Chemical mapping of a 177-nucleotide RNA with DMS and 2A3.
RNA sequence: GGGAACGACUCGAGUAGAGUCGAAAAUUCAAAAGAAUUUACUUUGAAGGCCGAAGUGGAGAAGGGUUCCAUAACAAUGGAAUUCAUUUAUGGGUGAGUCGAUCCUAAGGUCUGGGUUAACUCUCUCCAAGCCCUUGGAAUUCGUUCCAAGGGCUUGAAAAGAAACAACAACAACAAC
Reactivity to DMS in 0.01 (KOAc 150mM, MgCl2 10mM, bicine 150mM(pH8.5), 24C), signal-to-noise 2, nucleotides 027 to 126: u000u000c040a080a030a060a150g020a100a100u000u020u030a040c070u000u000u030g030a120a040g000g000c070c000g010a050a060g020u040g010g000a070g000a120a100g000g000g020u000u010c000c000a000u000a160a110c300a100a030u000g050g000a000a010u000u010c020a050u000u000u020a100u020g000g020g040u010g030a050g020u000c020g010a080u000c000c000u030a030a120g000g010u000c070u040g000g000g020u000u010a050a100c080u000c010u000c000u020c110
Reactivity to 2A3 in 0.01 (KOAc 150mM, MgCl2 10mM, bicine 150mM(pH8.5), 24C), signal-to-noise 2, nucleotides 027 to 126: u010u050c020a000a050a110a060g110a040a170u210u110u110a100c090u110u060u180g100a090a030g030g040c070c050g030a100a060g030u080g070g060a120g010a140a080g020g000g000u000u000c000c000a000u020a140a070c130a060a000u030g000g000a010a050u030u030c050a000u020u130u130a070u150g110g000g000u130g000a010g010u010c000g060a040u110c000c000u010a050a080g100g000u000c020u050g020g000g000u000u020a000a000c000u000c000u010c000u000c010
The DMS profile rests on 2,741 reads. For 2A3, 817 sequencing reads were counted.